Description
Conditions: 150 mM KOAc, 10 mM MgCl2 and 150 mM bicine (pH 8.5), 24 C. Chemical mapping of a 177-nucleotide RNA with 2A3 and DMS. High 2A3 reactivity points to a flexible backbone, as in loops and unpaired stretches. The DMS profile rests on 3,203 reads. It was measured as part of the RMDB library OK2TST.

RNA sequence: GGGAACGACUCGAGUAGAGUCGAAAAGACAGGUUUACAUUGCUUGUCAGAGCCACGCAGUGACAUUUUUACAGUAUGUAAUGAGAACCCCUUAGGAAUGCAUCAAAGGCGUUGGAAGGCUUACCUCCCGUAACCUAUCAUUCGUGAUAGGUUACGGAAAAGAAACAACAACAACAAC
Reactivity to 2A3 in 0.01 (KOAc 150mM, MgCl2 10mM, bicine 150mM(pH8.5), 24C), signal-to-noise 2, nucleotides 027 to 126: g000a010c010a000g030g040u080u050u250a100c040a130u160u300g010c010u020u000g040u010c010a000g000a010g030c000c030a010c020g000c030a050g010u020g070a100c020a020u050u070u010u020u030a040c030a020g160u130a090u180g060u000a040a160u190g050a040g070a210a100c020c000c000c010u000u010a030g030g020a070a020u100g030c010a010u020c010a050a180a000g080g000c000g040u000u010g040g050a110a020g020g000c010u020u030a000c000c020u040c000
Reactivity to DMS in 0.01 (KOAc 150mM, MgCl2 10mM, bicine 150mM(pH8.5), 24C), signal-to-noise 4, nucleotides 027 to 126: g010a050c030a030g020g040u000u010u000a130c250a080u010u010g010c030u010u010g000u010c010a100g010a090g010c020c010a090c040g000c020a080g010u000g010a080c040a010u010u010u000u010u000a050c080a120g010u010a050u020g010u000a050a050u010g010a170g010a100a180c030c030c030c020u000u000a100g010g000a050a050u010g000c040a070u000c100a060a090a090g000g010c050g030u010u000g000g000a070a060g000g000c040u000u000a130c050c050u000c110